[RMDB]
RNA sequence: GGGAACGACUCGAGUAGAGUCGAAAAAACUACUUCUUCGGAAGUAGUUAUUGCGUGGGUCUAAUAUGCCCAAGGUGCCAGGUUCGACCCUUGCUGGGCGCAUCACCGACCGAUUCGUCGGUCGGAACACUACCAUCGACUUCGGUCGAUGGUAGUGAAAAGAAACAACAACAACAAC
Reactivity to 2A3 in 0.01 (KOAc 150mM, MgCl2 10mM, bicine 150mM(pH8.5), 24C), signal-to-noise 1, nucleotides 027 to 126: a000a010c000u010a000c000u000u000c000u020u070c290g090g000a000a000g020u000a000g000u010u020a110u110u120g050c050g000u050g000g020g000u050c020u110a070a120u130a100u300g020c010c000c000a000a020g100g000u060g000c000c010a040g000g060u100u120c080g080a090c000c000c000u030u080g000c080u010g030g060g000c040g000c020a050u120c070a020c020c000g000a000c000c000g010a000u010u050c130g060u000c000g050g030u010c020g000g010a000a020
Reactivity to DMS in 0.01 (KOAc 150mM, MgCl2 10mM, bicine 150mM(pH8.5), 24C), signal-to-noise 2, nucleotides 027 to 126: a030a000c000u000a010c010u010u000c000u000u020c170g010g010a000a000g020u000a000g020u000u000a030u010u010g000c050g030u000g000g000g030u000c080u000a120a070u000a110u010g000c010c010c030a050a100g000g020u000g000c010c030a090g000g020u000u000c110g020a190c050c010c020u000u010g020c050u010g000g010g010c020g010c090a070u000c200a150c000c000g010a010c000c000g000a020u000u010c160g020u000c000g030g010u000c030g010g040a030a080
This 177-nucleotide RNA was probed chemically with 2A3 and DMS. The reactions ran in a buffer of 150 mM KOAc, 10 mM MgCl2 and 150 mM bicine (pH 8.5), at 24 C. For 2A3 the reverse transcriptase was SuperScript II with manganese. The data come from the RNA Mapping Database (RMDB), library M2PK50.